[RMDB]
RNA sequence: GGGAACGACUCGAGUAGAGUCGAAAAACAGAAGCUGCCUGUGAGAAUGACAAGAUGUUGGCUUUAUCAGGAAAAACUUCAAAUAUCCAUAAUAAGCAUGUUCACAGAAUUAAAGGAAACCAAAUUAAUCUCUUUACUAAUUCGUUAGUAAAGAGAUAAAAGAAACAACAACAACAAC
Reactivity to DMS in 0.01 (KOAc 150mM, MgCl2 10mM, bicine 150mM(pH8.5), 24C), signal-to-noise 3, nucleotides 027 to 126: a080c080a100g010a070a090g010c080u000g020c120c010u000g030u010g000a060g000a080a090u010g010a050c050a070a100g010a060u000g000u000u000g010g020c050u000u000u000a080u010c050a070g000g010a040a070a080a060a060c070u000u000c080a050a080a120u000a110u000c020c040a060u010a070a080u010a070a090g030c030a030u000g000u010u000c040a050c070a040g010a070a070u010u010a040a050a110g000g000a040a030a130c080c080a060a030a100u010u010a110
Reactivity to 2A3 in 0.01 (KOAc 150mM, MgCl2 10mM, bicine 150mM(pH8.5), 24C), signal-to-noise 2, nucleotides 027 to 126: a030c060a070g060a070a010g040c070u070g050c020c000u000g030u020g030a060g060a110a150u080g040a010c010a010a060g070a220u160g070u130u030g020g040c000u010u040u000a090u090c010a020g070g000a060a030a130a060a010c010u070u050c060a010a080a100u150a060u090c030c010a030u050a260a060u040a180a040g030c030a040u060g010u050u050c020a050c000a060g070a160a020u120u150a160a080a050g140g040a050a030a030c040c030a000a050a200u120u070a110